[RMDB]
RNA sequence: GGGAACGACUCGAGUAGAGUCGAAAAGCCAUCAGUCCGCCCGCUGGCAGCAAUGUUUUUACCCUGCCAGCCGACGCUGCCAUUGGCGGUCAAGUUGGUAUUGACGUAGCCGUCCGCCGCGCUAUUGAUGAUUCGUAAAAUUCGUUUUACGAAUCAUAAAAGAAACAACAACAACAAC
Reactivity to 2A3 in 0.01 (KOAc 150mM, MgCl2 10mM, bicine 150mM(pH8.5), 24C), signal-to-noise 7, nucleotides 027 to 126: g010c000c000a030u030c020a020g040u010c000c010g030c010c020c010g030c030u010g020g000c000a000g000c030a040a140u140g160u030u180u060u090u130a120c020c010c000u020g020c010c000a000g000c010c000g000a010c040g000c020u020g000c010c000a110u070u130g020g000c020g000g000u010c030a040a060g020u030u020g050g020u080a130u050u170g030a030c060g000u060a010g030c020c000g020u030c020c040g060c050c000g020c020g000c020u080a100u120u130g060
Reactivity to DMS in 0.01 (KOAc 150mM, MgCl2 10mM, bicine 150mM(pH8.5), 24C), signal-to-noise 9, nucleotides 027 to 126: g010c010c010a030u000c030a100g010u000c040c020g020c010c010c180g010c080u000g000g000c010a020g020c080a130a120u010g010u010u000u010u010u010a140c100c150c020u000g010c020c020a020g000c020c050g010a070c140g010c020u000g000c040c040a100u000u010g010g010c010g010g010u000c040a050a110g000u000u000g010g010u000a110u010u000g010a080c070g000u010a110g010c040c030g010u000c030c070g020c060c020g010c090g010c050u000a060u010u010g000